[RMDB]
RNA sequence: GGGAACGACUCGAGUAGAGUCGAAAAGAACUUUGGCCGCCUCGGAAUAGAAUCAGGGGGUGCAAACUGCCCACUGGCAGAAAGGAUUAUAGCAAAUGCGUACCCUAUUGCAAUACAGCCCGGCCAACAUAGACUACUCUAUUCGUAGAGUAGUCAAACACUAGUCUUAGUUCGCUAAGACUAGUGUAAAAGAAACAACAACAACAAC
Reactivity to 2A3 in 0.01 (KOAc 150mM, MgCl2 10mM, bicine 150mM(pH8.5), 24C), signal-to-noise 5, nucleotides 027 to 156: g050a070a020c010u060u030u030g010g000c000c000g060c000c050u080c050g020g020a120a080u150a160g080a070a110u170c050a110g000g050g010g000g010u040g000c000a050a060a090c010u030g000c010c010c060a150c170u170g010g000c020a020g070a070a060a010g120g040a070u170u140a090u210a190g070c060a060a110a110u110g000c040g030u090a080c000c010c000u040a100u020u110g050c030a070a040u060a120c040a050g030c030c000c000g010g000c010c000a000a010c010a020u130a040g000a000c000u000a000c000u000c000u000a050u100u070c180g080u090a010g000a000g000u000a000g000u000c000a000a010
Reactivity to DMS in 0.01 (KOAc 150mM, MgCl2 10mM, bicine 150mM(pH8.5), 24C), signal-to-noise 2, nucleotides 027 to 156: g000a070a100c060u000u000u000g000g020c010c040g080c010c000u000c040g030g010a190a160u000a090g000a170a180u000c070a070g020g000g010g020g020u010g000c040a060a050a190c080u000g000c000c000c090a040c070u000g010g000c040a040g000a180a150a080g000g020a170u000u010a070u000a070g040c010a080a070a100u000g000c060g010u000a120c030c000c010u000a130u000u000g010c040a100a150u000a100c040a100g000c000c040c010g000g000c010c020a030a050c110a100u000a180g000a020c000u000a010c010u000c000u010a060u000u010c250g060u000a020g000a040g010u000a020g000u000c000a000a070